[RMDB]
The record gives the reactivity of an RNA of 177 nucleotides to 2A3 and DMS. Values cover nucleotides 27 to 126. DMS adducts were read by reverse transcription with MarathonRT.
RNA sequence: GGGAACGACUCGAGUAGAGUCGAAAAUGGACGUUGUUCGCAACGUCCACAUAGUGAGACGUACGUUAAACGUAUCGCGGGCAAAAGUGCAGUUAGAAUAAGUACCUAUUGAGUUCGCUCAAUAGAAUGAAGUAUAAACGUUCGCGUUUAUACUUCAAAAAGAAACAACAACAACAAC
Reactivity to 2A3 in 0.01 (KOAc 150mM, MgCl2 10mM, bicine 150mM(pH8.5), 24C), signal-to-noise 3, nucleotides 027 to 126: u050g000g010a000c020g000u010u010g020u030u050c120g030c070a000a010c010g000u010c020c000a000c000a010u030a010g090u070g050a060g000a030c020g030u040a010c020g020u060u200a150a260a000c010g020u030a030u140c040g000c040g000g030g000c020a040a030a040a030g080u060g010c040a040g030u090u130a060g110a170a080u130a210a020g060u060a070c010c010u010a000u020u000g000a000g030u040u110c190g010c060u000c010a000a000u000a010g020a020a070
Reactivity to DMS in 0.01 (KOAc 150mM, MgCl2 10mM, bicine 150mM(pH8.5), 24C), signal-to-noise 5, nucleotides 027 to 126: u000g000g000a020c000g020u000u000g010u000u020c200g050c020a020a020c000g020u010c000c000a010c120a030u000a090g030u000g010a080g010a080c040g010u000a030c090g020u000u000a060a090a130c030g000u000a010u000c050g030c040g010g000g010c060a050a080a070a080g010u000g000c040a060g000u000u020a080g000a090a090u010a070a090g010u000a100c130c000u000a000u000u000g000a020g010u000u020c210g010c010u000c010a000a000u000a000g000a080a100